[RMDB]
RNA sequence: GGGAACGACUCGAGUAGAGUCGAAAAGAUAUGGAUUCCUCUCCGAUAAGUCCUGGUCGGAAACGACCAAGGACUUUUGACGGAAGAAUCCUAAGUCAAAAGAUAAAUUGGUUCGCCAAUUUAUCAACACUCAGUGCAUGUUCGCAUGCACUGAGUGAAAAGAAACAACAACAACAAC
Reactivity to DMS in 0.01 (KOAc 150mM, MgCl2 10mM, bicine 150mM(pH8.5), 24C), signal-to-noise 2, nucleotides 027 to 126: g000a050u000a280u000g000g000a000u020u000c020c020u000c060u000c020c010g000a200u000a010a000g020u000c000c000u000g010g010u000c000g000g000a050a060a180c000g000a020c000c000a030a020g020g000a010c000u000u000u000u000g010a280c300g000g000a010a030g010a010a010u000c000c000u000a040a140g000u010c060a090a070a150a110g000a020u000a000a000a020u010u000g000g000u000u000c220g040c000c000a000a000u000u000u000a000u010c000a130a150